[RMDB]
Source: RMDB library M2PK90, as collected in RNAgym. An RNA of 177 nucleotides, treated with DMS and 2A3 and read out base by base. For DMS, 2,118 sequencing reads were counted. For 2A3, 1,503 sequencing reads were counted. The RNA was probed in 150 mM KOAc, 10 mM MgCl2 and 150 mM bicine (pH 8.5) at 24 C.
RNA sequence: GGGAACGACUCGAGUAGAGUCGAAAAUAAAAGGACAACGAAAUGCGCCUCUGCAACCUCCAGCUGGUGUUGUCUGGGAACCUGAUGAAAACUACCGAGUUUGAUCAGGCCAAUGCAGAGAAAAAAAUCAUCCUCAAUAGUUCGCUAUUGAGGAUGAAAAAGAAACAACAACAACAAC
Reactivity to DMS in 0.01 (KOAc 150mM, MgCl2 10mM, bicine 150mM(pH8.5), 24C), signal-to-noise 3, nucleotides 027 to 126: u000a050a030a090a070g000g010a000c000a020a030c000g000a100a120a110u010g000c140g020c120c010u010c000u000g010c000a060a060c090c030u000c080c050a090g030c150u000g000g030u020g010u000u000g020u000c010u010g010g000g020a110a200c000c000u010g010a000u000g000a070a010a000a010c010u000a170c270c190g000a030g010u000u000u000g000a020u010c000a000g000g010c030c050a030a060u000g020c000a020g000a040g030a000a000a040a040a050a070a120
Reactivity to 2A3 in 0.01 (KOAc 150mM, MgCl2 10mM, bicine 150mM(pH8.5), 24C), signal-to-noise 1, nucleotides 027 to 126: u090a010a070a000a030g050g010a030c010a040a000c030g140a090a150a010u190g040c070g070c050c000u000c020u000g000c010a060a070c060c010u000c000c000a000g030c040u070g020g140u170g140u150u020g020u010c010u000g000g050g000a010a040c010c010u000g000a020u000g170a040a030a010a010c020u120a180c060c100g070a050g040u020u010u000g010a000u000c000a000g010g000c100c030a000a000u010g000c000a010g000a000g000a080a020a020a010a000a010a040